[RMDB]
RNA sequence: GGGAACGACUCGAGUAGAGUCGAAAAAGCCGACUACGGUCGGCAAUGAGCGUGUAGAAGGCAAGAUGUCGGCAUAGCUGAUGCUUUUGAAAUUUCGGCUGUGUCACAUCCAGCCAGCCAAACGCAACAUCCUAUCCGUAUUCGUACGGAUAGGAUGAAAAGAAACAACAACAACAAC
Reactivity to DMS in 0.01 (KOAc 150mM, MgCl2 10mM, bicine 150mM(pH8.5), 24C), signal-to-noise 5, nucleotides 027 to 126: a100g000c000c000g000a020c000u010a080c160g040g020u000c000g000g020c000a000a010u020g000a150g010c010g000u000g000u020a110g000a210a150g010g000c000a130a150g010a010u010g000u000c120g000g000c000a000u000a010g000c000u000g010a030u010g010c210u030u000u030u030g020a100a100a120u010u000u000c010g000g000c000u010g000u000g000u000c000a010c020a000u010c000c100a300g000c000c000a060g000c080c090a070a110a030c000g000c010a140a300
Reactivity to 2A3 in 0.01 (KOAc 150mM, MgCl2 10mM, bicine 150mM(pH8.5), 24C), signal-to-noise 8, nucleotides 027 to 126: a000g000c000c000g000a010c010u040a020c180g120g000u000c000g000g010c000a000a010u050g010a010g000c030g000u040g020u140a070g030a270a040g010g000c030a060a010g000a010u020g020u080c130g030g000c010a010u010a010g000c010u000g000a030u050g040c080u100u150u150u300g180a210a170a130u070u090u020c010g000g000c000u000g000u000g000u000c000a000c000a010u000c010c000a010g010c000c000a000g010c000c000a060a060a000c000g010c000a010a020